[RMDB]
RNA sequence: GGGAACGACUCGAGUAGAGUCGAAAAUGCCUCCAAGAUGGAAGAGGCUAAAGCCAGUUACCGAUACAUUAGACCACCGAAAGGUGAUGUGGUAGGGGGGCGUGCUAUAUGGAUAGAAGUUUCUUCGCUAUUAGAUGCAAUUCGUUGCAUCUAAUAGAAAAGAAACAACAACAACAAC
Reactivity to 2A3 in 0.01 (KOAc 150mM, MgCl2 10mM, bicine 150mM(pH8.5), 24C), signal-to-noise 9, nucleotides 027 to 126: u080g000c010c000u010c020c010a120a060g140a190u170g080g040a090a050g010a040g030g000c010u040a120a040a000g030c010c010a030g050u060u090a090c010c000g020a030u040a120c030a030u070u120a090g080a130c030c020a020c020c020g060a080a050a030g010g010u020g010a040u060g020u030g030g050u040a060g030g000g000g020g020g000c030g010u030g010c020u120a120u050a090u300g100g030a040u060a160g120a170a020g000u000u000u000c000u000u020c030g000
Reactivity to DMS in 0.01 (KOAc 150mM, MgCl2 10mM, bicine 150mM(pH8.5), 24C), signal-to-noise 5, nucleotides 027 to 126: u010g010c010c000u000c020c020a150a180g030a160u010g010g010a170a100g010a040g010g010c010u010a040a070a120g010c010c000a110g010u010u010a080c010c030g000a150u010a070c100a080u000u010a100g010a110c100c010a020c020c010g000a060a100a130g000g010u000g010a040u010g020u000g010g000u000a070g000g010g000g000g000g010c040g010u000g000c050u010a060u000a110u020g010g020a100u010a060g010a070a130g000u000u000u000c010u000u000c300g010